[RMDB]
RNA sequence: GGGAACGACUCGAGUAGAGUCGAAAAUGCACCAGGUAGCGCUGCUUGGCCGGCGGUGCGCCGGUUGGGAAGACGAUCCGGUUCCAGGUGUGCAGUCGCCUGCCGUGCAGGUCAUAACUGCCCUGAACCAUGAACAGGACUUCGGUCCUGUUCAUGGAAAAGAAACAACAACAACAAC
Reactivity to 2A3 in 0.01 (KOAc 150mM, MgCl2 10mM, bicine 150mM(pH8.5), 24C), signal-to-noise 2, nucleotides 027 to 126: u100g010c000a000c010c000a030g050g010u040a030g010c070g000c140u040g030c020u110u000g050g010c000c020g000g000c020g020g110u220g100c030g020c000c000g000g050u070u030g040g000g010a040a030g070a080c030g000a040u020c030c060g030g060u100u090c060c020a040g060g000u080g050u080g050c000a010g020u050c010g000c010c000u040g010c030c060g040u110g000c040a030g010g040u080c020a040u070a250a060c050u050g020c000c030c030u020g080a070a040
Reactivity to DMS in 0.01 (KOAc 150mM, MgCl2 10mM, bicine 150mM(pH8.5), 24C), signal-to-noise 2, nucleotides 027 to 126: u000g020c130a160c030c020a070g030g000u000a100g010c100g010c010u000g000c020u010u000g000g030c020c040g020g000c040g020g030u000g020c040g030c010c000g010g020u010u000g000g000g020a050a070g010a110c080g000a090u000c080c050g010g010u010u000c050c050a050g000g000u010g020u000g010c010a030g010u000c210g010c010c000u000g000c040c270g020u020g000c000a000g000g010u010c110a120u010a160a090c030u000g010c000c020c010u010g000a090a150